Structure probing data (DMS and 2A3) for a 177-nucleotide construct. The reactions ran in a buffer of 150 mM KOAc, 10 mM MgCl2 and 150 mM bicine (pH 8.5), at 24 C. For DMS, 1,103 sequencing reads were counted.
[RMDB]
RNA sequence: GGGAACGACUCGAGUAGAGUCGAAAAUUUGAUCGAGCCCACCCACAGCGGCUGAUCCGUCGGGCGUCCCUGCCCAUAGGUGGCCAACAACGCCUCGGCUUAAAAGAGCCUACGUUCGCGUAGGCUCCAUCAAAUCACACUUCGGUGUGAUUUGAUGAAAAGAAACAACAACAACAAC
Reactivity to DMS in 0.01 (KOAc 150mM, MgCl2 10mM, bicine 150mM(pH8.5), 24C), signal-to-noise 2, nucleotides 027 to 126: u000u000u020g010a110u010c040g010a030g010c000c010c090a140c040c000c010a170c160a180g020c140g020g000c040u010g010a050u010c030c270g000u010c090g020g010g010c000g000u000c040c080c060u000g000c010c000c040a190u000a060g010g000u020g000g030c040c030a070a060c220a100a110c020g020c040c000u000c100g000g000c010u030u000a010a040a110a110g010a000g000c020c000u000a000c000g020u010u010c180g000c020g020u000a000g000g000c000u000c010
Reactivity to 2A3 in 0.01 (KOAc 150mM, MgCl2 10mM, bicine 150mM(pH8.5), 24C), signal-to-noise 1, nucleotides 027 to 126: u030u010u080g030a000u040c100g100a000g010c000c000c010a050c030c030c020a140c010a040g040c090g080g000c000u020g010a030u020c000c050g030u020c070g010g040g000c000g020u020c020c000c020u000g060c010c010c010a030u170a060g170g000u050g020g000c000c000a060a060c020a000a040c040g030c000c000u120c030g050g000c010u100u150a040a090a070a000g000a000g010c010c000u000a000c010g040u030u040c120g000c010g120u000a000g010g030c010u010c010